[RMDB]
RNA sequence: GGGAACGACUCGAGUAGAGUCGAAAAGGCGAAGGUGACGGAGAGCAAGCGAAGGAGGUCGAGACAUCAAAAACAUUUACGCAGGAAGAGCUGGACAAAAUCGUAGCCGAUCGGCUGGCACGAGAGCGUAAAAAGGCCGACAAGUACAGCGAUUACGCAAUCGCGAAUCAUUCGUGAUUCGCGAUUGAAAAGAAACAACAACAACAAC
Reactivity to DMS in 0.01 (KOAc 150mM, MgCl2 10mM, bicine 150mM(pH8.5), 24C), signal-to-noise 1, nucleotides 027 to 156: g040g000c020g020a100a120g020g000u010g000a140c140g000g010a110g000a160g010c030a100a060g010c060g070a030a080g030g030a170g020g030u000c010g000a140g030a010c070a080u020c060a090a060a050a070a040c150a140u000u010u010a070c060g000c020a020g000g070a070a050g000a120g020c000u000g000g000a060c020a020a140a090a070u010c050g000u000a130g000c080c030g000a170u000c010g000g030c050u000g000g000c070a010c030g010a240g000a040g030c060g000u020a000a040a030a090a090g000g000c000c000g000a100c040a020a080g000u000a030c110a030g000c020g000a170u000u000a070c240g000
Reactivity to 2A3 in 0.01 (KOAc 150mM, MgCl2 10mM, bicine 150mM(pH8.5), 24C), signal-to-noise 2, nucleotides 027 to 156: g050g000c050g050a050a030g000g030u040g020a040c060g020g010a040g010a000g050c060a050a010g020c030g020a030a000g000g020a000g010g010u010c000g020a000g010a050c030a070u070c050a060a070a070a020a020c020a010u090u100u100a020c060g010c020a010g060g000a000a060g020a020g050c040u030g010g010a040c050a010a080a000a020u030c030g020u010a030g030c000c010g010a020u000c000g010g000c000u030g010g000c000a000c000g010a030g010a010g000c010g000u020a030a040a000a000a020g060g000c010c010g010a030c030a070a020g050u050a020c020a030g020c020g020a020u070u020a050c060g000
An RNA of 207 nucleotides, treated with DMS and 2A3 and read out base by base. For 2A3 the reverse transcriptase was SuperScript II with manganese. DMS adducts were read by reverse transcription with MarathonRT. Conditions: 150 mM KOAc, 10 mM MgCl2 and 150 mM bicine (pH 8.5), 24 C. Values are in units of 0.01, from 0 to 300, in steps of 10.